[RMDB]
RNA sequence: GGGAACGACUCGAGUAGAGUCGAAAACUCAGGAGGUACGCCUCCUGAGAAUACCGAGGUUGUUGCUCGGUAUAAACAACAAACCCUUGGAAACAAGGGAAAAGUGAGGCUGUACGCAGCCUCACAAUGAUUACGCUGAUUUCGAUCAGCGUAAUCAAAAAGAAACAACAACAACAAC
Reactivity to DMS in 0.01 (KOAc 150mM, MgCl2 10mM, bicine 150mM(pH8.5), 24C), signal-to-noise 2, nucleotides 027 to 126: c010u000c000a000g000g000a010g020g040u000a040c230g010c000c000u020c000c020u000g020a020g020a110a020u000a050c010c000g020a000g010g020u000u000g010u010u000g050c000u010c000g000g010u010a000u000a040a040a030c150a110a100c170a040a110a180c000c000c000u020u000g000g000a160a130a090c010a010a000g010g020g000a000a050a110a060g020u000g000a000g000g020c000u000g030u010a090c160g080c020a000g020c000c010u000c000a000c000a050a020
Reactivity to 2A3 in 0.01 (KOAc 150mM, MgCl2 10mM, bicine 150mM(pH8.5), 24C), signal-to-noise 2, nucleotides 027 to 126: c010u000c000a000g030g000a000g000g000u110a080c210g140c020c000u000c000c000u000g000a000g010a000a020u000a000c000c000g000a000g010g060u060u000g050u030u060g010c010u000c010g000g030u000a010u010a020a030a000c030a040a000c040a030a120a150c000c000c020u000u000g000g000a110a020a010c000a000a000g010g000g010a030a140a040a000g000u010g000a010g000g010c000u000g050u070a040c220g000c200a010g000c010c000u010c000a000c000a000a000

Record summary
This 177-nucleotide RNA was probed chemically with DMS and 2A3. Reactivities are given for positions 27 through 126. For DMS, 2,936 sequencing reads were counted. Conditions: 150 mM KOAc, 10 mM MgCl2 and 150 mM bicine (pH 8.5), 24 C. The data come from the RNA Mapping Database (RMDB), library OK1LIB. For DMS the reverse transcriptase was MarathonRT.